[RMDB]
This 177-nucleotide RNA was probed chemically with DMS and 2A3. Values cover nucleotides 27 to 126.

RNA sequence: GGGAACGACUCGAGUAGAGUCGAAAAGGGGGUUUAUAUGUGGUUGAUAAGUGCUGGCGAAGAGGGAGUGUCAACCAUGACAAGACGCGACUCUCAUGUGAAUCGUCAUCUGGACCAUCGCAAUCGCAACAUGCAGAAUAUUCGUAUUCUGCAUGUUAAAAGAAACAACAACAACAAC
Reactivity to DMS in 0.01 (KOAc 150mM, MgCl2 10mM, bicine 150mM(pH8.5), 24C), signal-to-noise 9, nucleotides 027 to 126: g000g010g010g000g010u010u010u030a060u040a070u030g020u010g000g000u000u010g010a070u020a070a120g010u010g010c070u010g010g010c030g010a070a100g000a080g000g010g010a300g020u010g010u000c020a050a100c140c080a060u020g000a060c170a080a100g010a060c080g010c040g000a060c030u010c020u000c070a090u020g020u030g000a080a080u010c040g000u010c030a060u010c050u000g000g010a080c040c030a050u020c070g010c060a060a080u020c110g010c120
Reactivity to 2A3 in 0.01 (KOAc 150mM, MgCl2 10mM, bicine 150mM(pH8.5), 24C), signal-to-noise 9, nucleotides 027 to 126: g040g010g010g010g010u040u130u060a210u050a080u160g050u030g020g010u020u020g030a050u040a140a090g050u060g070c030u040g040g020c030g030a070a020g030a070g030g010g000a040g020u040g010u010c010a030a040c060c030a060u100g040a040c070a070a050g030a020c040g020c010g150a180c010u010c000u000c040a070u120g060u030g110a090a080u050c010g020u010c020a040u030c060u050g080g020a020c020c010a030u040c030g000c050a020a090u080c040g010c060